Source: RMDB library OK2TRN, as collected in RNAgym.
An RNA of 177 nucleotides, treated with 2A3 and DMS and read out base by base.
The DMS profile rests on 3,288 reads.
As a SHAPE reagent, 2A3 marks flexible, mostly unpaired nucleotides at the ribose 2'-OH.
RNA sequence: GGGAACGACUCGAGUAGAGUCGAAAACACUGGGCAGAAAUAACAGAGUCAGGGUCCACCCUUUGCAUAGGUUGUGUCCGUGCGGAUGUCCCAUGGAUGGUCAUUGGCCCACCCUCCAUCCUGUGCCCAUGGAACUCCAAUUCGUUGGAGUUCCAUGAAAAGAAACAACAACAACAAC
Reactivity to 2A3 in 0.01 (KOAc 150mM, MgCl2 10mM, bicine 150mM(pH8.5), 24C), signal-to-noise 2, nucleotides 027 to 126: c040a000c050u050g020g010g040c040a020g170a120a160a050u200a100a040c030a000g100a050g120u150c000a000g060g040g030u090c000c010a060c020c010c000u040u060u140g070c040a060u090a220g060g020u060u090g050u040g040u120c040c030g050u010g000c050g040g020a080u080g060u090c000c020c010a020u070g000g030a040u020g000g000u080c070a130u060u160g060g000c030c000c000a040c010c000c000u020c000c000a000u040c020c000u000g000u040g060c020c000
Reactivity to DMS in 0.01 (KOAc 150mM, MgCl2 10mM, bicine 150mM(pH8.5), 24C), signal-to-noise 3, nucleotides 027 to 126: c090a090c080u000g020g020g010c020a080g000a090a080a110u010a120a100c080a070g000a200g020u000c060a060g000g020g010u000c060c050a070c090c030c010u000u000u000g010c150a070u000a050g010g010u000u000g020u010g000u000c020c030g020u010g020c070g000g000a210u000g010u000c020c020c030a110u020g000g010a060u000g000g000u020c080a140u000u010g040g000c020c000c040a090c080c020c020u000c020c010a080u000c030c010u000g020u020g000c070c040